This 207-nucleotide RNA was probed chemically with 2A3. 2A3 adducts were read by reverse transcription with SuperScript II with manganese.
RNA sequence: GGGAACGACUCGAGUAGAGUCGAAAAGGUGAUUGUGAUACUCGCUACUGUCAUUCAUCGAAUGACAGUAUUUGACUGCUACAAUCACAUUACGUGACUCAAUUAUUUAGCAGUCAAAUUGAUAACAUAACGCGAGAUAUGUUAAAGUCACGUAUCGCGCCCCAUUUAGUUUCGACUAAAUGGGGCGAAAAGAAACAACAACAACAAC
Reactivity to 2A3 in 0.01 (KOAc 150mM, MgCl2 10mM, bicine 150mM(pH8.5), 24C), signal-to-noise 2, nucleotides 027 to 156: g140g000u000g030a010u000u010g000u010g010a010u010a030c010u000c010g000c000u010a020c000u000g000u000c000a000u020u000c020a160u180c180g000a000a000u000g000a000c000a010g000u000a010u010u000u000g000a000c000u000g010c000u000a000c000a000a000u000c010a010c000a000u070u070a020c020g010u000g000a000c000u060c090a160a170u120u130a090u150u220u170a060g000c000a000g000u000c000a000a000a000u020u070g040a040u050a150a010c060a040u090a080a020c150g000c000g020a020g020a070u030a000u010g060u000u090a080a050a000g000u000c000a000c000g000u000a020u070c070g010